[RMDB]
RNA sequence: GGGAACGACUCGAGUAGAGUCGAAAAACAAAUACUCACGCUGCUAGGCGGGUGCGCACUGCUGUCUGGCCCGGCGCCGCGCUAGGGCGCACACCUACCGUUGCAAAGGGUAACCGGGCUGAAAAAACAGCUAUAUUUUCUUCGGAAAAUAUAGCUGAAAAGAAACAACAACAACAAC
Reactivity to 2A3 in 0.01 (KOAc 150mM, MgCl2 10mM, bicine 150mM(pH8.5), 24C), signal-to-noise 2, nucleotides 027 to 126: a030c040a020a080a050u140a040c000u040c020a030c070g070c040u090g020c040u080a040g090g010c020g070g000g000u030g000c030g000c000a090c080u080g000c030u100g060u150c090u090g030g000c050c000c000g160g000c070g000c010c020g000c030g030c110u070a020g020g000g050c040g020c020a000c010a070c000c010u080a060c020c030g080u060u020g000c040a040a100a080g080g000g000u020a030a060c010c000g010g000g010c020u090g100a140a090a000a030a010a030
Reactivity to DMS in 0.01 (KOAc 150mM, MgCl2 10mM, bicine 150mM(pH8.5), 24C), signal-to-noise 3, nucleotides 027 to 126: a070c110a050a080a060u000a030c030u010c020a120c240g010c060u010g000c060u010a070g000g010c300g020g010g020u000g000c030g010c040a100c040u000g010c040u010g010u000c040u000g020g000c000c010c050g010g000c170g030c020c030g020c060g000c090u010a030g020g010g020c030g010c040a040c040a090c020c020u000a080c100c050g020u000u010g010c060a050a120a110g000g000g000u000a050a080c050c010g000g000g000c040u000g000a000a030a080a080a110a120
An RNA of 177 nucleotides, treated with 2A3 and DMS and read out base by base. Values cover nucleotides 27 to 126. For 2A3 the reverse transcriptase was SuperScript II with manganese.